[RMDB]
RNA sequence: GGGAACGACUCGAGUAGAGUCGAAAAACACCCAGUUCGCUGGGUGUGACGAGACGCUCUUAGUUCAGUUCGGCAGAACGUGGGUCUCCAAAACCCGAUGUCGUAGGUUCAAAUCCUACAGAGCGUGCCAAUUGAGCUCUUCCUUCGGGAAGAGCAAUGAUACACUCGAAUUCGUUCGAGUGUAUCAAAAAGAAACAACAACAACAAC
Reactivity to DMS in 0.01 (KOAc 150mM, MgCl2 10mM, bicine 150mM(pH8.5), 24C), signal-to-noise 2, nucleotides 027 to 156: a010c000a030c000c000c010a010g010u010u000c300g040c000u010g020g010g050u000g000u010g010a050c100g030a140g060a030c010g020c010u000c000u000u000a100g040u000u000c020a220g000u010u000c120g010g020c180a030g000a040a050c040g030u020g010g020g040u000c050u000c160c300a060a070a080a080c010c000c010g010a010u000g050u000c060g010u000a000g000g040u000u000c090a090a300a110u010c010c000u000a040c000a040g000a010g000c010g000u000g000c030c040a060a220u010u030g000a130g010c010u000c000u000u000c000c000u000u020c270g100g000g000a000a000g030a000g020c000a000a000
Reactivity to 2A3 in 0.01 (KOAc 150mM, MgCl2 10mM, bicine 150mM(pH8.5), 24C), signal-to-noise 2, nucleotides 027 to 156: a000c010a010c010c010c000a000g020u050u050c220g040c100u000g000g000g010u000g010u010g020a040c090g100a040g020a010c000g030c010u000c000u010u020a010g000u000u010c000a020g010u080u100c080g090g120c100a000g000a000a000c000g000u040g010g030g000u030c090u100c120c020a000a150a020a040c000c000c010g030a040u080g040u060c010g000u000a000g000g000u010u000c000a000a010a010u000c000c000u000a010c000a000g000a000g000c010g000u050g000c030c010a080a050u060u170g050a040g020c000u000c000u000u000c010c000u020u040c270g020g000g000a000a000g000a000g000c000a000a000

Background: An RNA of 207 nucleotides, treated with DMS and 2A3 and read out base by base. For DMS, 3,892 sequencing reads were counted. For 2A3 the reverse transcriptase was SuperScript II with manganese. The reactions ran in a buffer of 150 mM KOAc, 10 mM MgCl2 and 150 mM bicine (pH 8.5), at 24 C. The data come from the RNA Mapping Database (RMDB), library ARCHII.